[RMDB]
RNA sequence: GGGAACGACUCGAGUAGAGUCGAAAAAUGAGAUCCCAUCUUGCACACUGUGCUAAUUUGAGAUUCUCAUGCCUCCUACUUGGAGAGAUCUGGACUUGAAGUCAGGGCAUCUGACUCUGCCAGCCACAAAACGUACAAGGCUUCGGCCUUGUACGAACAAUUGGCUGAUCUUCGGAUCAGCCAAUUGAAAAGAAACAACAACAACAAC
Reactivity to DMS in 0.01 (KOAc 150mM, MgCl2 10mM, bicine 150mM(pH8.5), 24C), signal-to-noise 1, nucleotides 027 to 156: a070u000g020a000g000a040u000c010c000c000a040u000c030u000u010g000c010a050c030a200c120u010g040u020g040c000u010a020a000u000u000u000g030a020g000a030u000u010c000u000c010a030u000g030c090c040u000c030c000u000a080c150u000u000g030g000a120g000a210g020a130u000c020u000g030g000a110c060u000u000g010a110a030g040u000c040a020g000g030g050c150a110u000c010u010g000a000c010u000c010u000g010c040c050a050g000c010c000a110c110a070a060a070a170c010g020u010a010c000a000a010g010g020c000u000u000c300g050g000c000c010u000u010g020u000a000c030g000a020a050
Reactivity to 2A3 in 0.01 (KOAc 150mM, MgCl2 10mM, bicine 150mM(pH8.5), 24C), signal-to-noise 4, nucleotides 027 to 156: a000u020g000a010g000a010u000c000c010c000a000u010c010u010u030g010c000a020c030a060c170u300g000u000g020c060u090a030a040u020u010u000g040a040g000a040u300u030c000u000c010a010u040g070c000c010u000c000c000u130a260c100u110u260g020g010a010g000a020g030a090u040c000u000g000g020a090c050u080u090g080a160a010g000u000c000a010g050g060g180c050a150u080c120u000g010a010c000u000c000u000g000c000c000a010g040c060c000a090c040a020a160a060a010c030g010u000a010c010a000a010g000g000c000u030u180c140g060g000c000c000u000u000g000u000a000c000g000a000a000